This 177-nucleotide RNA was probed chemically with DMS.
RNA sequence: GGGAACGACUCGAGUAGAGUCGAAAACGCUGACGCUGGUGGCUUUCUGGUGGUGGCAACGUCCGCGAACGAAUGCUGUGGCUGCUGACUCUUUAGUUGGCGUUUUGGUCGAUGAGAAUAACGCCGGAUGCGUGAACAUGUUCGCAUGUUCACGCAUAAAAGAAACAACAACAACAAC
Reactivity to DMS in 0.01 (KOAc 150mM, MgCl2 10mM, bicine 150mM(pH8.5), 24C), signal-to-noise 2, nucleotides 027 to 126: c110g020c030u000g010a090c050g000c090u010g000g000u010g010g000c100u000u000u000c070u000g000g000u010g010g010u000g000g040c070a060a070c130g000u010c020c040g030c050g000a030a110c070g010a080a090u000g000c060u000g020u000g000g010c030u000g000c030u000g000a080c060u000c070u000u000u000a070g020u000u000g020g000c000g010u000u010u000u000g000g010u000c040g020a150u010g010a140g020a110a080u020a040a050c060g020c000c000g010g000
The reactions ran in a buffer of 150 mM KOAc, 10 mM MgCl2 and 150 mM bicine (pH 8.5), at 24 C.